Chemical mapping of a 207-nucleotide RNA with 2A3 and DMS.
RNA sequence: GGGAACGACUCGAGUAGAGUCGAAAAUUGCAUCCAGCUUCCAGCGGGGUAAGUCACGGCACGCACGCGGUAACUUAGCGACUUCCCGCAGUGCGACGAAUGUGCAUGCACAGGUACCCCUGACCGUUCACAACCAACAGGUGCCUCCGCCCGGCGAAUAUAGGUUAAGAUUCGUCUUAACCUAUAUAAAAGAAACAACAACAACAAC
Reactivity to 2A3 in 0.01 (KOAc 150mM, MgCl2 10mM, bicine 150mM(pH8.5), 24C), signal-to-noise 3, nucleotides 027 to 156: u050u030g000c010a020u070c020c050a030g010c020u070u020c030c030a040g020c050g010g000g010g060u070a100a030g060u110c050a030c080g050g000c110a010c040g000c000a000c010g030c020g010g000u000a020a040c040u070u150a050g050c050g080a050c040u060u050c000c010c000g000c030a020g010u010g010c030g060a090c040g110a160a080u090g010u070g040c050a050u080g080c050a020c010a010g040g070u110a060c000c010c000c020u020g040a030c000c020g060u110u070c030a050c010a170a070c080c000a050a080c010a060g010g020u040g050c010c020u050c010c010g050c000c000c030g000g010c030g080a040
Reactivity to DMS in 0.01 (KOAc 150mM, MgCl2 10mM, bicine 150mM(pH8.5), 24C), signal-to-noise 2, nucleotides 027 to 156: u010u010g010c020a150u000c020c060a120g020c040u020u000c040c030a160g020c050g040g000g010g000u000a050a070g020u010c050a090c040g030g100c010a140c040g020c050a020c010g010c020g040g010u010a070a040c040u000u000a110g030c070g000a120c090u010u000c040c010c020g010c020a070g030u000g020c020g020a080c020g010a030a090u000g040u010g030c040a070u000g010c040a110c040a070g000g020u000a070c040c010c010c020u010g010a090c020c020g020u000u020c060a100c040a070a070c020c020a050a150c070a090g010g020u000g010c000c000u000c020c000g000c010c010c040g000g000c030g000a140